[RMDB]
RNA sequence: GGGAACGACUCGAGUAGAGUCGAAAAGGAGGCUUCGAACUCCCACCUGGCCGUCCUCCGGACGGCGGGUCACCGGUCAGGCGGUUCCGUCCCACGGCGGUGACCAGCCCGAAAUCGCGCCCCGCGGUAUUAGUUAAGUAUUCGUACUUAACUAAUAAAAAGAAACAACAACAACAAC
Reactivity to DMS in 0.01 (KOAc 150mM, MgCl2 10mM, bicine 150mM(pH8.5), 24C), signal-to-noise 9, nucleotides 027 to 126: g000g010a080g000g010c050u040u020c150g000a110a090c050u000c020c010c060a120c040c020u000g000g040c030c030g020u010c030c030u070c170c250g030g040a140c270g010g020c030g000g000g000u000c040a040c020c010g010g010u020c040a160g000g010c070g000g000u010u030c100c040g000u010c010c050c070a160c190g000g000c020g010g010u000g000a010c010c000a060g000c020c000c030g000a050a100a090u010c040g000c090g000c030c010c020c060g020c080g010g000
Reactivity to 2A3 in 0.01 (KOAc 150mM, MgCl2 10mM, bicine 150mM(pH8.5), 24C), signal-to-noise 9, nucleotides 027 to 126: g030g020a030g020g020c070u130u100c210g080a100a030c010u020c010c010c000a040c000c010u030g210g000c010c010g030u040c000c020u230c080c150g030g020a030c020g000g000c000g000g000g000u010c010a020c020c020g060g110u130c040a040g000g050c020g050g010u130u160c070c030g050u130c060c040c010a050c100g020g010c000g000g010u040g020a020c000c000a000g010c000c010c000g030a070a060a030u080c020g000c000g020c020c000c010c030g030c030g020g000